[RMDB]
RNA sequence: GGGAACGACUCGAGUAGAGUCGAAAAACUUUAAAUCUUGGUUCGACCGCUGAAACAUGCUUCACCAGUUUCAUAAAAUAACUUUACGCUCUUUCGCUUUACGGAAUAUUGAUACUCAACAUGCAUUCUUUACCGCCAACGCUUUGAAAUGGAGCAACUUUUAUCCCCUAUUCGUAGGGGAUAAAAGAAAAGAAACAACAACAACAAC
Reactivity to 2A3 in 0.01 (KOAc 150mM, MgCl2 10mM, bicine 150mM(pH8.5), 24C), signal-to-noise 3, nucleotides 027 to 156: a000c110u250u160u120a110a120a100u040c020u040u110g050g020u060u060c050g060a050c010c100g050c040u030g040a000a000a040c050a040u120g020c030u070u060c060a060c050c010a070g040u070u050u100c080a060u110a170a130a080a110u090a070a040c010u050u110u130a080c060g030c020u030c020u030u030u030c040g010c030u050u040u100a020c000g040g110a140a070u090a060u100u150g020a030u060a120c070u070c130a060a140c030a140u160g010c020a040u070u030c010u000u050u020a080c040c000g000c020c010a060a000c040g010c090u120u080u110g070a040a050a110u110g010g000a010g020c020a030a040
Reactivity to DMS in 0.01 (KOAc 150mM, MgCl2 10mM, bicine 150mM(pH8.5), 24C), signal-to-noise 1, nucleotides 027 to 156: a060c040u000u000u000a110a030a070u000c020u000u010g000g000u000u000c060g010a140c040c050g060c040u000g000a230a110a130c080a100u000g000c040u010u000c070a110c050c040a220g000u000u010u010c060a070u020a080a060a110a060u010a060a120c060u000u000u000a080c080g000c020u000c010u000u000u000c040g050c040u000u000u000a100c050g000g000a110a110u000a100u000u010g010a050u000a070c060u000c060a130a060c160a130u030g010c010a100u000u010c070u010u000u000a130c070c010g000c000c030a020a070c080g010c060u000u020u000g010a080a010a090u020g020g000a030g010c040a120a110